[RMDB]
RNA sequence: GGGAACGACUCGAGUAGAGUCGAAAACAAACACAAGUAGAAAAUGCUAAGGGAGAACUUAAAGAUAAGUUCGAUGUUAUUGUUAAGAAUAACAAUGGAGGAGAGUCUUACAAAUCUAAUUCAGCAGGAGAGCAAAAACGUAUUGACCUAGCUAUUAACUAACUCAUCAUUUCGAUGAUGAGUUAGUAAAAGAAACAACAACAACAAC
Reactivity to 2A3 in 0.01 (KOAc 150mM, MgCl2 10mM, bicine 150mM(pH8.5), 24C), signal-to-noise 7, nucleotides 027 to 156: c010a000a080a000c030a000c020a110a010g040u070a020g090a070a080a030a030u100g000c030u070a060a070g040g010g010a080g020a030a010c010u040u040a140a120a090g120a140u100a070a050g020u030u020c020g020a020u040g010u020u020a020u010u010g050u050u130a140a040g040a080a040u040a030a010c010a020a070u080g040g010a020g030g010a030g010a010g030u010c010u060u050a050c030a030a060a020u010c010u090a060a060u100u060c020a010g000c000a000g030g030a030g000a010g030c040a030a030a020a060a030c060g030u070a040u050u080g010a010c010c020u010a010g010c000u020a050u120u050a070
Reactivity to DMS in 0.01 (KOAc 150mM, MgCl2 10mM, bicine 150mM(pH8.5), 24C), signal-to-noise 4, nucleotides 027 to 156: c060a100a080a060c030a090c040a060a080g030u000a040g000a060a110a090a100u000g020c060u010a090a090g020g020g020a160g000a060a050c010u000u000a030a060a210g010a180u010a010a040g020u020u010c000g000a170u010g010u000u000a010u000u010g000u000u000a080a140g000a090a050u010a030a060c020a030a100u000g000g020a090g020g010a100g020a090g000u010c040u000u020a180c070a070a080a080u000c040u000a050a090u000u010c060a060g000c070a050g030g000a100g000a110g010c040a030a020a030a070a040c060g010u000a060u000u000g010a100c040c020u000a050g010c020u010a100u000u010a080
This 207-nucleotide RNA was probed chemically with 2A3 and DMS. For 2A3, 6,312 sequencing reads were counted. Source: RMDB library OK3TST, as collected in RNAgym. The RNA was probed in 150 mM KOAc, 10 mM MgCl2 and 150 mM bicine (pH 8.5) at 24 C. Values are in units of 0.01, from 0 to 300, in steps of 10.